[RMDB]
RNA sequence: GGGAACGACUCGAGUAGAGUCGAAAACGUACGAUUCGUCGUACGAAAAAUCCUAAGUCAGAGAGGUUAAAGGGAGAGCGUAUCGGAAACGAUACUGGGCUCAUCGAUCUUUAACUACCCACCUCUGAUAUGGAAAAAACCCUUGUUCGCAAGGGAAGCACUUUUACCAGUUCGCUGGUAAAAGUGCAAAAGAAACAACAACAACAAC
Reactivity to 2A3 in 0.01 (KOAc 150mM, MgCl2 10mM, bicine 150mM(pH8.5), 24C), signal-to-noise 2, nucleotides 027 to 156: c000g000u000a000c010g000a030u010u100c150g010u000c000g020u100a010c000g000a030a000a000a010a000u000c000c000u060a150a000g010u000c000a000g000a000g000a010g060g000u000u000a000a000a000g040g020g000a030g000a000g010c000g020u000a000u010c000g000g090a070a030a020c000g010a000u000a000c040u090g160g210g000c000u020c010a190u240c070g020a060u010c000u020u000u010a000a010c000u040a060c000c000c030a060c010c010u040c010u030g000a010u000a040u040g140g040a220a030a010a200a030a080c000c000c000u020u010g010u020u070c250g030c120a000a000g000g000g030a000a020